RNA sequence: GGGAACGACUCGAGUAGAGUCGAAAACGUCGACGCCCUUGCCGGCCAAGCGCUUUCGGAUCUCUUCCGCGGUCUCGGCUAGUCCGGGCUGAUGCACGACGGCGACCUUGUGCCGGUCGGCCAGCAGACGAUAUCGUGGUUUCGACCACGAUAUCGUAAAAGAAACAACAACAACAAC
Reactivity to DMS in 0.01 (KOAc 150mM, MgCl2 10mM, bicine 150mM(pH8.5), 24C), signal-to-noise 2, nucleotides 027 to 126: c130g010u010c020g030a190c280g010c010c020c060u000u000g010c070c040g020g000c010c000a020a040g010c020g030c010u000u000u000c020g000g000a050u010c110u000c050u010u000c040c030g010c080g000g000u010c000u010c020g010g010c030u000a110g030u010c020c000g020g020g010c020u000g000a040u010g010c110a140c010g010a040c020g000g010c010g020a080c180c040u000u000g000u020g010c000c000g000g000u020c120g000g020c000c050a060g010c150a170g010
Reactivity to 2A3 in 0.01 (KOAc 150mM, MgCl2 10mM, bicine 150mM(pH8.5), 24C), signal-to-noise 2, nucleotides 027 to 126: c020g000u030c020g040a050c090g020c010c030c000u030u170g020c030c000g000g000c000c000a020a000g000c010g010c010u000u010u050c000g070g000a140u020c020u040c000u240u090c070c020g030c060g030g040u050c160u160c130g020g020c050u140a060g070u040c020c010g000g030g000c010u000g020a130u050g040c120a050c130g030a010c010g010g000c010g040a120c030c030u040u030g100u160g040c000c010g020g000u020c010g010g000c010c010a040g000c030a020g050